[RMDB]
RNA sequence: GGGAACGACUCGAGUAGAGUCGAAAAUGCCUGGCGAAGCUUUCGGGGCUGCCUUCGUGCACGCCGUGGGAGCACCCUUUUUCCGGAGCAGGCUGCUCGGCCCCUUUUGUUUCUGGAAGGUGGCGAAGUCCCGAGUCGUAUUCGUACGACUCGGGACAAAAGAAACAACAACAACAAC
Reactivity to 2A3 in 0.01 (KOAc 150mM, MgCl2 10mM, bicine 150mM(pH8.5), 24C), signal-to-noise 2, nucleotides 027 to 126: u090g040c000c000u010g000g230c130g160a100a020g000c020u010u030u020c000g030g000g030g020c040u000g030c000c010u170u200c180g190u250g000c000a010c060g000c010c000g300u040g000g000g000a000g000c000a070c020c000c010u020u270u040u000u060c130c000g030g000a100g020c020a010g050g020c000u040g040c000u050c000g030g000c000c010c010c030u000u020u050u060g090u010u120u020c000u030g010g020a020a020g030g170u300g020g020c020g030a080a020
Conditions: 150 mM KOAc, 10 mM MgCl2 and 150 mM bicine (pH 8.5), 24 C. An RNA of 177 nucleotides, treated with 2A3 and read out base by base. The 2A3 profile rests on 736 reads.